[RMDB]
RNA sequence: GGGAACGACUCGAGUAGAGUCGAAAAGGGAAGGCGAGCUUCCCCGCGUACGGCACCUCGGCUACCGGGUGCGCGACGAGGCGAGCCUGGACACGCUGCUGGCCCUCGCCGACGCGCAGGGGCUGCCGAUCUAAGAUAGGUUCGCCUAUCUUAGAUCAAAAGAAACAACAACAACAAC
Reactivity to 2A3 in 0.01 (KOAc 150mM, MgCl2 10mM, bicine 150mM(pH8.5), 24C), signal-to-noise 8, nucleotides 027 to 126: g070g010g050a080a020g030g030c170g070a060g100c020u090u100c010c000c000c000g010c000g020u200a200c030g010g000c010a030c010c010u120c040g050g000c050u120a190c050c010g030g020g030u110g010c030g010c000g060a240c090g030a060g080g040c030g010a020g000c010c050u030g010g020a080c060a020c160g120c070u110g010c060u030g030g020c020c040c000u030c040g000c000c010g030a060c020g000c000g000c030a030g000g010g000g000c020u020g010c010c030
Reactivity to DMS in 0.01 (KOAc 150mM, MgCl2 10mM, bicine 150mM(pH8.5), 24C), signal-to-noise 9, nucleotides 027 to 126: g010g010g010a080a050g010g010c140g010a130g010c020u000u000c010c010c080c050g010c050g010u000a110c100g020g010c020a090c020c010u000c060g020g010c070u000a110c030c010g010g000g010u000g000c010g010c010g020a090c160g010a130g000g010c050g000a110g010c160c050u000g000g010a110c100a080c160g010c100u010g000c110u000g000g010c150c060c040u000c060g010c010c010g000a060c070g000c030g020c090a100g010g000g000g000c060u000g010c070c080